[RMDB]
RNA sequence: GGGAACGACUCGAGUAGAGUCGAAAAGCCGACGCCGCGGUGGGCGCGCGAGCCGCUGUUCGAGAAGGCCGUGACGCCGAGCGACGUCGGCAAGCUCAACCGCCUCGUGGUGCCCAAGCAGCAGGCCGGGCUUGUAUAGUUUCGACUAUACAAGCCCAAAAGAAACAACAACAACAAC
Reactivity to DMS in 0.01 (KOAc 150mM, MgCl2 10mM, bicine 150mM(pH8.5), 24C), signal-to-noise 2, nucleotides 027 to 126: g000c000c000g000a020c010g040c030c010g000c020g000g000u010g030g010g020c000g030c010g000c030g000a150g040c030c000g000c110u020g010u000u030c110g010a080g030a160a140g020g020c000c000g000u000g000a130c020g000c000c000g000a240g000c010g010a000c000g020u010c000g000g000c020a020a000g010c070u010c060a120a090c120c110g010c040c000u010c090g010u000g020g000u000g000c010c010c010a130a090g030c110a120g000c060a090g000g010c090c240
Reactivity to 2A3 in 0.01 (KOAc 150mM, MgCl2 10mM, bicine 150mM(pH8.5), 24C), signal-to-noise 1, nucleotides 027 to 126: g000c000c000g010a010c000g010c010c010g000c030g100g300u170g190g050g000c000g000c000g000c000g000a070g010c000c000g010c040u130g130u230u190c090g020a030g010a230a150g030g000c000c000g020u030g050a120c020g020c000c000g000a000g000c010g000a000c000g000u020c000g000g000c010a000a000g010c010u010c010a040a010c010c030g030c020c000u020c050g040u090g000g040u070g040c010c000c000a040a020g010c030a000g000c020a000g010g000c000c000